[RMDB]
RNA sequence: GGGAACGACUCGAGUAGAGUCGAAAAGGCAGGUGAGAAAGAGGGUUGGUGCUCUAAGCCGAAUUGGUUCACAUCACCCAUCUAACAACUUGACUAAAAAACGUGUAGGGUGAUUGUAAUUAGACAGAACGAUACAUCCAUUCGUGGAUGUAUCGUUAAAAGAAACAACAACAACAAC
Reactivity to DMS in 0.01 (KOAc 150mM, MgCl2 10mM, bicine 150mM(pH8.5), 24C), signal-to-noise 6, nucleotides 027 to 126: g010g000c030a040g010g010u010g000a090g010a050a110a080g000a090g000g000g010u010u010g010g000u000g010c090u010c090u000a090a110g010c020c020g010a090a130u010u010g010g010u000u000c160a060c030a040u000c000a020c000c000c000a120u000c120u000a090a130c100a050a060c060u000u000g010a090c160u020a010a060a050a060a050a070c170g020u000g000u000a160g020g000g020u000g010a040u000u000g000u000a050a060u010u000a090g000a100c180a130g000
Reactivity to 2A3 in 0.01 (KOAc 150mM, MgCl2 10mM, bicine 150mM(pH8.5), 24C), signal-to-noise 2, nucleotides 027 to 126: g040g030c010a010g030g070u090g040a100g010a040a100a000g050a130g030g030g000u090u110g000g020u040g030c020u070c020u060a000a010g000c000c000g030a010a080u110u150g010g010u080u030c070a010c000a060u020c010a000c000c040c000a050u060c060u120a080a060c060a000a050c040u080u110g070a040c090u210a050a040a000a000a100a050c090g030u060g020u020a090g040g000g000u000g010a020u030u090g010u020a000a060u060u000a010g020a020c050a020g100
An RNA of 177 nucleotides, treated with DMS and 2A3 and read out base by base. For DMS, 5,304 sequencing reads were counted. The RNA was probed in 150 mM KOAc, 10 mM MgCl2 and 150 mM bicine (pH 8.5) at 24 C.